An RNA of 177 nucleotides, treated with 2A3 and DMS and read out base by base. The data come from the RNA Mapping Database (RMDB), library OK1LIB. For DMS, 2,662 sequencing reads were counted.
RNA sequence: GGGAACGACUCGAGUAGAGUCGAAAAUGGCAGCUGCGCGGUCAGGCCACCGGCCGGCAAGUGGAGAACGCCAGGGUGGGCGUGACGGCGAACCAGGGCCUGUUCGGGCACGGUUCCUCGGUGAUCGUAGCACUGCAGGAUUCGUCCUGCAGUGCUAAAAAGAAACAACAACAACAAC
Reactivity to 2A3 in 0.01 (KOAc 150mM, MgCl2 10mM, bicine 150mM(pH8.5), 24C), signal-to-noise 3, nucleotides 027 to 126: u090g070g010c040a060g010c080u020g000c220g010c070g110g030u030c000a030g040g060c000c020a040c070c030g070g090c030c000g040g000c100a070a060g070u150g130g090a120g040a090a000c010g000c050c000a090g060g040g060u130g050g050g010c050g030u080g030a000c000g060g000c030g000a020a050c000c120a060g010g040g070c010c000u020g030u140u090c010g000g030g000c040a000c080g070g000u010u000c000c000u000c030g000g060u090g000a080u090c030g000
Reactivity to DMS in 0.01 (KOAc 150mM, MgCl2 10mM, bicine 150mM(pH8.5), 24C), signal-to-noise 2, nucleotides 027 to 126: u000g010g000c070a090g010c070u020g010c050g020c020g000g000u030c010a070g000g040c010c010a070c060c110g010g010c100c060g030g020c030a070a100g060u010g000g030a080g040a120a090c040g010c040c000a180g000g010g020u030g000g000g040c030g000u000g020a100c010g030g020c150g000a010a110c070c040a080g010g000g000c060c010u000g000u000u040c050g000g000g010c010a070c060g000g000u030u000c000c000u010c010g030g000u060g020a120u060c090g000